Structure probing data (2A3 and DMS) for a 177-nucleotide construct. It was measured as part of the RMDB library OK2TST. Conditions: 150 mM KOAc, 10 mM MgCl2 and 150 mM bicine (pH 8.5), 24 C. For DMS the reverse transcriptase was MarathonRT.
RNA sequence: GGGAACGACUCGAGUAGAGUCGAAAACGGUACGCCAGUACACCGGCAGGAGCUUCGCCAAUGGUGCGGCGGUUUCCGGCGUCAUCGAGCGGCCCCGCGAAGCGCCGCCGAUCAAGGACCAGGCGAGAUUUACAACUUAUUUCGAUAAGUUGUAAAUAAAAGAAACAACAACAACAAC
Reactivity to 2A3 in 0.01 (KOAc 150mM, MgCl2 10mM, bicine 150mM(pH8.5), 24C), signal-to-noise 8, nucleotides 027 to 126: c020g030g040u100a020c030g020c020c010a020g030u050a030c030a040c050c030g040g000c080a130g040g060a050g030c030u080u050c020g000c010c020a110a190u150g030g000u050g040c020g030g000c000g000g010u020u040u010c010c000g010g030c010g030u070c020a090u080c060g080a030g090c060g020g000c010c010c000c000g030c080g010a030a010g040c030g010c040c000g000c010c000g010a050u070c060a040a070g080g000a020c010c020a010g020g000c010g010a050g010
Reactivity to DMS in 0.01 (KOAc 150mM, MgCl2 10mM, bicine 150mM(pH8.5), 24C), signal-to-noise 9, nucleotides 027 to 126: c080g010g020u000a070c040g010c030c030a190g010u000a070c060a120c080c040g010g010c070a110g020g000a090g020c060u000u000c030g010c010c080a100a120u010g010g020u000g010c030g010g010c010g010g000u000u000u000c020c010g010g010c260g000u000c030a050u010c080g000a110g020c080g000g000c010c040c020c050g010c140g010a030a040g010c110g010c020c000g010c000c010g000a040u000c140a110a130g010g000a070c030c030a090g010g000c010g010a080g000